[RMDB]
RNA sequence: GGGAACGACUCGAGUAGAGUCGAAAAAUUUCCAAGCCUGCGGUUGAGUACGUGGGACUUGGAAAACUGCCCAGUGAAUCUGAUUACUUGGUGGCUUAUGAUCAGGAAUGGGAGGCGUGUCCUCGCAGUACCUACGCUUGUUCGCAAGCGUAGGUACAAAAGAAACAACAACAACAAC
Reactivity to 2A3 in 0.01 (KOAc 150mM, MgCl2 10mM, bicine 150mM(pH8.5), 24C), signal-to-noise 1, nucleotides 027 to 126: a120u040u010u040c000c040a000a020g010c000c000u000g000c000g110g180u190u250g190a150g160u120a070c000g050u030g000g000g120a130c010u010u000g000g000a000a000a000a040c040u080g000c000c000c000a100g070u100g050a070a060u000c050u070g010a120u050u010a070c030u020u050g080g000u060g020g050c040u010u180a070u300g050a040u030c040a050g000g220a120a070u120g020g030g030a040g000g030c080g040u200g060u070c010c000u000c040g130c020a020
Reactivity to DMS in 0.01 (KOAc 150mM, MgCl2 10mM, bicine 150mM(pH8.5), 24C), signal-to-noise 1, nucleotides 027 to 126: a130u000u000u000c000c000a010a010g030c010c010u010g000c000g020g010u010u000g000a200g020u000a070c020g000u010g000g000g010a120c000u020u030g000g010a010a000a050a090c040u010g000c000c000c000a090g010u000g000a130a100u030c070u000g020a090u000u000a090c110u000u000g040g010u000g010g020c040u020u000a100u020g000a010u010c040a040g010g020a120a080u010g020g000g010a070g010g010c060g010u000g000u020c010c010u000c060g030c070a090
The record gives the reactivity of an RNA of 177 nucleotides to 2A3 and DMS. For 2A3, 735 sequencing reads were counted.